[RMDB]
RNA sequence: GGGAACGACUCGAGUAGAGUCGAAAAGGUCUGAGGAUGCUGAAAAUAUCAUCCCGAUUCAGGUAAUUAAAUCGAAAGAAAUCGAGGAAGCCACUGGUCAGGAUGCGUGGCUUGAAGCAUCAACUGAUGAAGGAUUUGUCGCUUGGCUGAAUAAGUGGGUACGUUAGUACUUCGGUACUAACGUACCAAAAGAAACAACAACAACAAC
Reactivity to DMS in 0.01 (KOAc 150mM, MgCl2 10mM, bicine 150mM(pH8.5), 24C), signal-to-noise 1, nucleotides 027 to 156: g010g030u000c000u000g030a140g000g030a070u000g000c020u000g000a080a130a100a150u000a100u010c020a110u000c000c010c010g000a140u020u010c000a030g030g020u000a060a160u000u000a130a120a170u030c040g010a130a060a160g010a050a130a090u000c030g020a140g030g000a130a140g020c000c050a050c000u000g070g000u000c100a070g000g020a020u000g050c120g030u000g040g000c080u010u000g000a070a100g010c070a110u000c040a070a110c040u010g000a040u020g010a060a060g000g000a090u000u000u000g000u000c010g000c050u020u000g020g000c020u000g000a130a040u000a050a070g030u010g030
Reactivity to 2A3 in 0.01 (KOAc 150mM, MgCl2 10mM, bicine 150mM(pH8.5), 24C), signal-to-noise 2, nucleotides 027 to 156: g050g010u010c010u050g030a010g050g040a020u010g040c050u100g080a070a060a000a010u100a040u100c040a000u010c010c000c000g000a010u120u140c020a000g070g040u050a060a080u080u070a050a110a080u080c030g030a020a090a070g170a070a230a080u050c000g000a000g040g030a020a000g000c030c040a040c040u060g030g010u080c050a040g070g000a030u120g010c040g020u020g000g000c000u010u050g000a030a010g000c010a030u060c050a020a120c030u060g000a030u070g010a060a020g020g000a040u050u050u070g040u030c030g010c180u070u070g050g020c020u020g000a070a040u150a220a000g050u120g030